An RNA of 177 nucleotides, treated with DMS and 2A3 and read out base by base. Conditions: 150 mM KOAc, 10 mM MgCl2 and 150 mM bicine (pH 8.5), 24 C. The 2A3 profile rests on 1,953 reads. The data come from the RNA Mapping Database (RMDB), library M2PK50. Reactivities are given for positions 27 through 126.
RNA sequence: GGGAACGACUCGAGUAGAGUCGAAAAGUUUGACUGUUCGCAGUCAAACAAAGGCUAAGGUAUAAAAAUCUGCUAGUUACCUAAGCCAAAAACGAGCUGAAAAAACGGCGUACUUCGGUACGCCGAACUUUUAUAUGGUGUUCGCACCAUAUAAAAGAAAAGAAACAACAACAACAAC
Reactivity to DMS in 0.01 (KOAc 150mM, MgCl2 10mM, bicine 150mM(pH8.5), 24C), signal-to-noise 2, nucleotides 027 to 126: g000u000u000u000g020a030c000u000g020u000u040c160g000c000a020g020u010c000a010a010a030c000a080a090a130g010g000c000u000a100a040g000g010u010a040u010a010a070a080a150a140u020c060u000g030c080u000a130g000u010u020a010c000c000u000a080a030g020c010c010a020a060a050a060a090c160g000a090g000c050u000g010a010a050a040a050a080a150c000g030g010c000g010u000a000c000u000u030c130g010g010u000a000c010g000c000c000g000a000a010
Reactivity to 2A3 in 0.01 (KOAc 150mM, MgCl2 10mM, bicine 150mM(pH8.5), 24C), signal-to-noise 1, nucleotides 027 to 126: g010u000u000u020g010a000c010u010g010u070u060c220g030c090a000g000u030c000a000a000a000c000a000a060a020g010g020c000u010a010a080g030g040u020a080u080a120a250a050a040a130u130c050u090g080c050u060a050g140u070u020a010c010c000u000a030a030g000c020c050a010a070a000a000a100c120g020a030g070c120u100g020a000a000a110a060a000a060c020g010g060c000g040u010a000c000u030u070c200g060g010u020a040c000g000c000c000g010a000a000